The record gives the reactivity of an RNA of 177 nucleotides to 2A3 and DMS. 2A3 adducts were read by reverse transcription with SuperScript II with manganese.

RNA sequence: GGGAACGACUCGAGUAGAGUCGAAAAUGUGUACGGUACAAACAGAAACGACACAUAUUUCACGUCGCCCUUAGACGCCAGUGCUAUCAAGGGGAGAUGAAAUAACUCCGUCUUACCAUAGCCCGGACAGGCGAUGACUGUUCGCAGUCAUCGCCUGAAAAGAAACAACAACAACAAC
Reactivity to 2A3 in 0.01 (KOAc 150mM, MgCl2 10mM, bicine 150mM(pH8.5), 24C), signal-to-noise 3, nucleotides 027 to 126: u000g000u040g000u040a160c070g080g080u120a070c100a040a300a020c040a200g150a100a220a000c000g020a000c000a000c010a000u080a190u090u050u030c010a000c010g060u040c060g070c020c000c000u000u060a030g000a000c020g030c000c000a130g030u130g040c000u060a040u110c090a010a040g000g000g170g000a000g000a000u160g180a030a050a140u160a110a050c040u010c000c000g180u070c080u020u050a030c020c070a080u070a020g020c000c050c040g000g000a010
Reactivity to DMS in 0.01 (KOAc 150mM, MgCl2 10mM, bicine 150mM(pH8.5), 24C), signal-to-noise 1, nucleotides 027 to 126: u000g020u000g000u000a150c050g040g000u050a170c120a120a050a130c300a120g000a060a030a030c000g000a020c000a020c000a000u000a150u020u000u000c080a230c050g000u000c050g150c010c010c000u010u000a100g000a050c280g000c080c150a150g070u020g040c050u000a040u000c030a010a000g000g000g010g000a030g000a030u000g000a150a050a000u000a080a100c100u020c000c010g000u100c100u000u000a120c100c010a140u010a070g000c000c000c140g000g000a300